Description: The record gives the reactivity of an RNA of 177 nucleotides to 2A3 and DMS.

[RMDB]
RNA sequence: GGGAACGACUCGAGUAGAGUCGAAAAUAUUAGUAACUAUAGCCACUGAUUUACUAAGGCUUACAUCAUAUUUUGUAAGUGCAUAUAUUUGCAUUGGUUGACUCCCAGAUGCAAAUGGAGUAACUAAAGGCAUAUUAUCCUUCGGGAUAAUAUGCCUAAAAGAAACAACAACAACAAC
Reactivity to 2A3 in 0.01 (KOAc 150mM, MgCl2 10mM, bicine 150mM(pH8.5), 24C), signal-to-noise 2, nucleotides 027 to 126: u200a090u070u030a010g040u070a030a060c100u070a120u100a120g130c000c000a110c100u190g010a150u000u010u010a070c090u100a070a110g070g000c000u010u010a010c000a000u100c070a070u110a110u220u160u190u000g020u010a010a000g000u040g120c120a100u120a020u010a000u280u000u000g040c010a000u010u020g060g000u060u130g100a070c000u050c020c010c020a040g030a150u000g000c000a020a000a000u050g040g030a220g040u040a020a060c010u100a110a230
Reactivity to DMS in 0.01 (KOAc 150mM, MgCl2 10mM, bicine 150mM(pH8.5), 24C), signal-to-noise 1, nucleotides 027 to 126: u010a050u000u000a000g000u010a000a050c120u010a080u020a010g000c160c110a080c060u030g000a050u030u000u000a010c040u010a010a010g000g000c020u000u000a000c010a000u040c300a070u010a070u030u020u020u000g000u000a020a000g010u010g030c100a090u030a160u060a000u000u000u000g050c000a000u000u000g030g000u010u010g000a130c070u010c130c010c030a170g000a010u000g000c030a030a010a040u000g000g030a190g010u010a000a050c070u000a050a120
The 2A3 profile rests on 508 reads.